[RMDB]
Structure probing data (2A3) for a 207-nucleotide construct. Conditions: 150 mM KOAc, 10 mM MgCl2 and 150 mM bicine (pH 8.5), 24 C. It was measured as part of the RMDB library OK3TST. For 2A3, 379 sequencing reads were counted. Reactivities are given for positions 27 through 156.
RNA sequence: GGGAACGACUCGAGUAGAGUCGAAAACGCUAAUAAAGUUGGGACUGACAGAUGUGUUCUAUUCAACUGGUGAUUAUAUCAAUAUGUGUAAUUCAGAUGUGAGUGUUGACGCUAUGAUUCACAAAACGUAUAUAGAUGUCAAUGAAGAGUAUACAGACUAUAGCUCGCGAUUCGUCGCGAGCUAUAGAAAAGAAACAACAACAACAAC
Reactivity to 2A3 in 0.01 (KOAc 150mM, MgCl2 10mM, bicine 150mM(pH8.5), 24C), signal-to-noise 1, nucleotides 027 to 156: c040g000c030u090a040a070u140a070a300a080g030u030u060g080g090g090a090c010u040g010a030c030a140g060a040u030g120u020g000u060u000c090u170a080u060u030c010a040a070c050u070g000g080u070g080a060u060u130a030u010a030u300c060a140a190u060a150u040g020u020g070u000a050a050u020u110c030a030g030a170u130g090u030g020a030g040u060g000u010u210g000a000c010g000c030u010a030u120g000a020u090u090c080a030c020a130a080a000a000c070g010u010a060u000a000u010a090g070a000u070g060u050c020a020a010u070g040a000a030g030a000g100u120a040u040a070c050a000g070a020